This 177-nucleotide RNA was probed chemically with DMS and 2A3.
It was measured as part of the RMDB library RFM100.
Reactivities are given for positions 27 through 126.
For DMS the reverse transcriptase was MarathonRT.

RNA sequence: GGGAACGACUCGAGUAGAGUCGAAAACUCUAUAAGAACACUCAAUUUUCACGCUUUCUGUCUUCUUUCUUCCAGGGCUCUCCCCUUGCCCUAGGCUCUGGCCGUUGCGCCCGGCGGGGUCAACUCCCCGACUGGUGCAAUUCGUUGCACCAGUCGGAAAAGAAACAACAACAACAAC
Reactivity to DMS in 0.01 (KOAc 150mM, MgCl2 10mM, bicine 150mM(pH8.5), 24C), signal-to-noise 1, nucleotides 027 to 126: c010u020c020u020a040u020a120a190g000a020a090c100a090c070u000c060a130a140u000u020u010u000c020a110c060g010c060u000u070u000c000u030g030u020c040u010u000c010u000u000u000c020u000u010c030c000a030g010g020g040c020u010c030u000c010c000c000c050u000u000g010c000c000c000u040a090g000g000c030u010c020u000g010g010c080c020g000u020u000g010c050g020c010c020c000g020g010c030g000g000g000g010u000c080a000a150c090u000c030c070
Reactivity to 2A3 in 0.01 (KOAc 150mM, MgCl2 10mM, bicine 150mM(pH8.5), 24C), signal-to-noise 3, nucleotides 027 to 126: c030u070c020u010a100u030a220a150g090a150a030c060a030c060u090c040a180a150u050u050u110u060c040a040c040g050c010u040u070u030c050u030g110u000c020u050u000c000u020u130u010c000u070u020c030c030a020g000g030g000c020u000c010u020c020c000c000c010u000u050g010c030c010c000u000a050g020g000c010u000c010u050g130g000c000c010g050u060u070g030c040g050c000c000c000g000g010c000g000g010g000g020u000c020a030a050c040u050c000c020